[RMDB]
RNA sequence: GGGAACGACUCGAGUAGAGUCGAAAAGCAGCACCUUGGUUACUGCCGGUUUUCCGUCCAUUAGGUUGUUACGGCGAUACAGCCGGGAGAGGAUGAUUGGUUGAUCGUUAAGAUCUGCCAAUCGCAAGGGUAAUUCAAACUUCGGUUUGAAUUGCCCAAAAGAAACAACAACAACAAC
Reactivity to DMS in 0.01 (KOAc 150mM, MgCl2 10mM, bicine 150mM(pH8.5), 24C), signal-to-noise 6, nucleotides 027 to 126: g010c030a040g000c300a060c030c070u030u020g020g010u020u020a140c020u000g010c030c030g000g020u010u000u010u010c010c010g020u020c050c060a100u040u030a080g010g010u010u010g000u000u000a140c070g000g000c030g020a180u050a100c200a120g010c000c000g000g000g000a100g000a090g010g010a100u020g010a010u010u010g000g010u000u000g000a010u000c000g000u010u060a100a150g000a010u000c000u000g000c010c000a010a000u000c000g000c120a100a100
Reactivity to 2A3 in 0.01 (KOAc 150mM, MgCl2 10mM, bicine 150mM(pH8.5), 24C), signal-to-noise 6, nucleotides 027 to 126: g020c030a000g010c030a050c000c040u120u170g100g000u130u150a040c010u040g020c000c010g060g040u010u010u060u020c030c020g050u020c020c010a090u140u180a080g090g000u040u030g010u030u070a030c040g000g010c000g050a150u110a300c110a020g000c020c000g000g020g010a160g000a030g070g060a100u120g000a000u030u000g010g000u000u040g000a000u000c010g040u100u210a150a080g000a000u000c000u000g010c010c000a000a010u000c000g000c010a030a110